[RMDB]
RNA sequence: GGGAACGACUCGAGUAGAGUCGAAAACGCGUUAUCGAAGACAAGGAGGUGAAUUGGGAUGCCAUGGAACUGUUACUGCAGCAUUUGGAUGACAUACUACACCUAAGCAAUAGCGAAGUCCCAACACGCAUAUCAUAUCAUUCGUGAUAUGAUAUGCAAAAGAAACAACAACAACAAC
Reactivity to DMS in 0.01 (KOAc 150mM, MgCl2 10mM, bicine 150mM(pH8.5), 24C), signal-to-noise 7, nucleotides 027 to 126: c170g000c050g010u000u000a040u000c080g000a100a100g000a120c220a100a110g030g020a060g010g010u000g000a090a130u020u010g000g000g000a020u010g000c020c020a020u000g000g010a060a090c030u010g010u030u020a080c220u030g000c060a040g010c080a080u000u020u010g000g010a040u000g000a100c030a030u000a070c050u000a090c030a030c020c020u000a050a090g000c060a080a030u000a030g000c020g000a030a060g000u000c000c010c000a080a080c250a080c160
Reactivity to 2A3 in 0.01 (KOAc 150mM, MgCl2 10mM, bicine 150mM(pH8.5), 24C), signal-to-noise 9, nucleotides 027 to 126: c050g010c010g020u030u040a060u110c080g070a130a050g110a130c080a130a060g160g040a040g000g080u030g050a180a140u160u100g050g020g040a020u070g020c010c000a010u030g040g050a080a040c010u010g030u100u210a130c080u230g030c010a010g000c020a090u040u040u090g070g040a030u040g020a020c000a020u060a030c010u020a020c000a010c000c000u020a040a040g040c030a030a050u020a050g010c010g030a050a000g060u030c000c000c000a010a020c080a020c060